[RMDB]
RNA sequence: GGGAACGACUCGAGUAGAGUCGAAAACCAUAGGAUUUCGAUCCUAUGGCCUGCUAUGUCGCGUAAUAGCUUUUCGACACUACUUGGGUCGUUCCCACGCGAUGGGGACCGGUUUCGACCGGUCCAAUGUUAGUUCUAUAUUCGUAUAGAACUAACAAAAAGAAACAACAACAACAAC
Reactivity to DMS in 0.01 (KOAc 150mM, MgCl2 10mM, bicine 150mM(pH8.5), 24C), signal-to-noise 9, nucleotides 027 to 126: c000c000a000u000a000g000g000a010u000u000u010c180g010a030u000c000c000u000a000u000g000g010c200c120u000g010c010u000a010u000g000u010c180g010c260g010u000a090a020u000a010g010c010u000u000u000u000c000g000a010c000a120c000u000a000c000u000u000g000g010g000u000c000g010u000u000c000c000c000a000c070g010c120g000a110u000g010g010g010g010a010c000c000g010g000u000u000u010c190g010a030c000c000g010g000u000c000c000a000a010